[RMDB]
RNA sequence: GGGAACGACUCGAGUAGAGUCGAAAAGCACAUUGGAACCAGAAAAUUUCAAUAGUGUCACUAGAUUGAUGUGUAACUUAGGUCCUGACAUAUUUUUAAGUAUGUGCUACAGGUGUCCUAAGGAAAUAGGCCUGUGAGUUCGCUCACAGGAAAAGAAACAACAACAACAAC
Reactivity to 2A3 in 0.01 (KOAc 150mM, MgCl2 10mM, bicine 150mM(pH8.5), 24C), signal-to-noise 6, nucleotides 027 to 129: g000c010a000c000a010u000u000g000g020a000a010c050c040a170g170a090a160a020a010u010u010u020c000a030a020u030a170g010u000g040u090c040a050c080u060a070g030a280u080u230g100a130u170g080u050g030u080a070a020c000u000u000a000g020g000u010c000c010u010g020a010c010a020u050a020u050u100u050u060u090a120a000g010u010a010u010g010u020g050c050u050a080c000a000g030g000u010g060u060c000c000u010a000a000g040g010a000a060a040u140a050g040g060
Reactivity to DMS in 0.01 (KOAc 150mM, MgCl2 10mM, bicine 150mM(pH8.5), 24C), signal-to-noise 4, nucleotides 027 to 129: g000c020a040c000a070u000u000g050g050a000a000c080c090a020g050a050a070a110a130u060u020u000c020a010a040u000a120g000u010g020u020c060a170c080u050a050g020a160u040u010g030a090u000g030u080g010u030a080a140c010u000u030a020g020g000u020c000c000u040g010a080c040a000u010a010u020u030u110u040u090a060a040g030u000a030u020g030u040g030c130u060a190c030a010g020g010u030g020u060c010c020u050a000a030g000g000a040a040a090u080a100g020g010

Chemical mapping of a 170-nucleotide RNA with 2A3 and DMS. The reactions ran in a buffer of 150 mM KOAc, 10 mM MgCl2 and 150 mM bicine (pH 8.5), at 24 C. It was measured as part of the RMDB library 15KLIB.